[RMDB]
RNA sequence: GGGAACGACUCGAGUAGAGUCGAAAAAGUUAUGAGUUCGCUCAUAACUACAGCGAAUGGCGCUCGGACCCGCAGUCCGCCGAAGGCAUCCCAGCCUGUCCAAGUUGGUAUAUUUCGAUAUACCAAAUACAUGUUAUGAAUUCGUUCAUAACAUGUAAAAAGAAACAACAACAACAAC
Reactivity to 2A3 in 0.01 (KOAc 150mM, MgCl2 10mM, bicine 150mM(pH8.5), 24C), signal-to-noise 7, nucleotides 027 to 126: a000g010u010u000a010u010g000a000g040u020u110c180g050c070u000c000a000u000a010a010c000u020a030c030a010g060c020g090a140a110u120g060g010c020g010c060u030c050g050g030a060c010c040c040g020c050a020g020u000c020c020g020c010c010g050a030a010g050g010c010a040u030c020c010c000a010g020c010c010u040g030u020c040c020a090a060g100u040u020g010g020u000a000u000a000u010u110u070c220g040a000u000a000u000a000c000c000a010a020a000
Reactivity to DMS in 0.01 (KOAc 150mM, MgCl2 10mM, bicine 150mM(pH8.5), 24C), signal-to-noise 9, nucleotides 027 to 126: a040g010u000u000a010u000g000a020g020u000u010c220g010c000u000c000a000u000a010a010c000u000a060c130a300g010c040g000a070a050u010g000g010c030g020c050u000c060g010g000a080c030c210c040g000c070a090g010u000c050c020g020c070c030g000a100a040g000g000c050a080u000c020c010c010a170g010c070c040u000g000u000c060c090a110a130g010u000u000g000g000u000a010u000a000u000u000u010c160g010a020u000a010u000a000c000c000a010a020a090
Chemical mapping of a 177-nucleotide RNA with 2A3 and DMS. Reactivities are given for positions 27 through 126. The reactions ran in a buffer of 150 mM KOAc, 10 mM MgCl2 and 150 mM bicine (pH 8.5), at 24 C.